[RMDB]
RNA sequence: GGGAACGACUCGAGUAGAGUCGAAAAUUCAAUCCCGGUGGAUCCCGCGCGGCGUCUAUCCUGUGAACUCGCCCAGGCCUGGAAGGCAGCAAGCGUCAACGGGCUCUGUCGGGUGCGCGGGAGUAAAUCAUUAUUUACCGUUCGCGGUAAAUAAUGAAAAAGAAACAACAACAACAAC
Reactivity to 2A3 in 0.01 (KOAc 150mM, MgCl2 10mM, bicine 150mM(pH8.5), 24C), signal-to-noise 2, nucleotides 027 to 126: u090u020c010a000a080u020c000c000c000g000g100u070g140g040a090u010c000c000c000g000c010g000c040g000g020c020g060u000c070u170a290u300c000c020u060g000u040g080a070a040c040u030c070g030c000c040c020a070g090g050c000c010u130g210g120a110a070g030g040c000a010g010c000a070a000g030c000g020u030c050a050a040c010g000g000g000c020u000c020u050g010u000c020g020g000g010u020g000c040g000c030g000g000g000a000g010u020a000a040a040
Reactivity to DMS in 0.01 (KOAc 150mM, MgCl2 10mM, bicine 150mM(pH8.5), 24C), signal-to-noise 4, nucleotides 027 to 126: u010u020c140a100a140u000c010c000c010g020g020u020g010g010a120u000c000c000c000g000c010g030c010g030g000c030g010u000c020u010a030u010c020c000u010g020u000g010a110a130c110u000c020g020c030c040c040a270g000g010c040c000u000g010g010a090a120g010g000c010a060g010c120a130a140g010c070g010u000c080a100a090c010g000g000g000c020u000c020u000g010u000c010g000g000g020u000g010c020g010c010g010g010g000a010g000u010a060a110a140
Chemical mapping of a 177-nucleotide RNA with 2A3 and DMS. It was measured as part of the RMDB library M2PK90. Conditions: 150 mM KOAc, 10 mM MgCl2 and 150 mM bicine (pH 8.5), 24 C.